[RMDB]
RNA sequence: GGGAACGACUCGAGUAGAGUCGAAAAUCACCCCACGAAUCUGAGAUGGUACGGAUUUCAGGUGGAGUAUCCGUAUACGGGGUCUUAGAUUAUGGAGACGCAGUAGUUCCGCUCAUCUCCCUGCAUCCCCGAUUAGUGAUUUCGAUCACUAAUCGGGAAAAGAAACAACAACAACAAC
Reactivity to 2A3 in 0.01 (KOAc 150mM, MgCl2 10mM, bicine 150mM(pH8.5), 24C), signal-to-noise 8, nucleotides 027 to 126: u110c050a150c020c000c000c000a050c120g060a030a000u010c000u030g010a020g010a060u220g060g000u010a000c000g000g010a030u040u080u150c060a110g130g140u130g150g070a050g020u080a020u000c010c000g030u010a010u060a110c060g070g030g020g020u000c000u010u020a020g000a030u020u030a060u220g080g010a050g010a030c040g000c070a020g030u140a010g030u110u030c030c010g010c030u030c010a100u010c020u010c010c010c010u030g020c010a090u110c000
Reactivity to DMS in 0.01 (KOAc 150mM, MgCl2 10mM, bicine 150mM(pH8.5), 24C), signal-to-noise 1, nucleotides 027 to 126: u040c080a170c070c050c000c060a140c100g000a010a000u000c030u020g040a030g000a040u010g000g000u000a000c000g000g000a010u000u000u000c020a110g030g010u000g000g010a060g030u000a020u000c040c010g040u010a000u000a060c120g010g020g180g010u000c010u030u020a020g000a000u060u010a050u020g020g020a040g000a130c170g000c020a060g020u000a030g000u000u000c020c040g000c080u000c030a040u010c080u000c000c000c070u010g040c140a090u010c020